[RMDB]
RNA sequence: GGGAACGACUCGAGUAGAGUCGAAAAGCUUCCAGCGGGACGGUCGCGCCCGCCGACGGCAAUCCGAGGAUGACGAAGAUCAACAUGCUGACCAACAGGCCCAUCGAGCCCAGCACCGCGAUCAGCGGCUAACCGGAGUGUUCGCACUCCGGUUAGCAAAAGAAACAACAACAACAAC
Reactivity to 2A3 in 0.01 (KOAc 150mM, MgCl2 10mM, bicine 150mM(pH8.5), 24C), signal-to-noise 9, nucleotides 027 to 126: g030c030u100u020c020c000a010g020c010g010g010g030a050c070g050g050u060c030g000c020g010c040c000c000g000c000c010g050a040c020g020g010c030a030a080u040c020c030g030a040g080g010a060u110g010a030c050g070a080a060g030a160u100c050a040a080c010a070u130g030c020u020g040a110c020c000a030a070c030a060g060g010c020c020c000a100u110c060g030a030g010c000c010c000a010g010c020a030c020c020g020c010g040a100u060c050a020g050c020g060
Reactivity to DMS in 0.01 (KOAc 150mM, MgCl2 10mM, bicine 150mM(pH8.5), 24C), signal-to-noise 6, nucleotides 027 to 126: g010c110u000u010c050c050a190g000c010g020g000g000a110c110g000g000u000c050g030c040g000c010c010c000g020c020c020g010a090c090g000g000c120a110a090u000c030c020g030a160g000g020a070u010g000a080c110g000a130a080g000a100u010c080a080a150c220a090u040g000c000u020g000a100c080c070a070a110c150a150g010g000c020c010c040a120u000c070g010a090g020c020c000c040a050g000c120a110c060c030g030c070g000a050u020c040a090g010c120g010